[RMDB]
This 177-nucleotide RNA was probed chemically with 2A3 and DMS. The RNA was probed in 150 mM KOAc, 10 mM MgCl2 and 150 mM bicine (pH 8.5) at 24 C. DMS adducts were read by reverse transcription with MarathonRT.
RNA sequence: GGGAACGACUCGAGUAGAGUCGAAAAGAUUCAGUCAUUCAACGUUUUGAAUACACUUAUGAGUUAGGCUGGAAAUUAUUACAGCGUUGGAUAAAAUUAAAUAUUGGCCCUGAAGAGGCAGAGCCGACACCCUAAAUAUAUUCGUAUAUUUAGGGUGAAAAGAAACAACAACAACAAC
Reactivity to 2A3 in 0.01 (KOAc 150mM, MgCl2 10mM, bicine 150mM(pH8.5), 24C), signal-to-noise 7, nucleotides 027 to 126: g030a010u120u110c040a030g120u070c040a020u030u010c010a010a020c030g010u000u020u120u210g060a040a020u090a030c020a000c070u120u090a080u240g170a100g150u070u080a050g050g000c050u020g040g060a050a110a040u190u090a050u070u060a080c040a020g000c010g020u010u010g000g010a020u060a080a090a060a050u190u180a070a060a050u190a080u080u060g010g000c000c010c010u040g040a100a030g040a060g170g040c000a010g010a010g020c000c010g010a010
Reactivity to DMS in 0.01 (KOAc 150mM, MgCl2 10mM, bicine 150mM(pH8.5), 24C), signal-to-noise 6, nucleotides 027 to 126: g010a140u010u000c050a090g020u010c150a040u010u010c010a020a030c070g010u000u000u000u010g020a070a040u000a090c140a060c070u000u000a070u010g010a120g010u010u000a050g020g010c100u000g010g010a100a110a100u010u000a040u010u010a100c070a040g010c020g010u000u000g010g000a020u000a070a070a070a100u010u010a050a070a090u000a150u000u000g010g000c000c010c000u000g020a110a100g010a110g010g010c020a010g000a050g010c010c010g010a140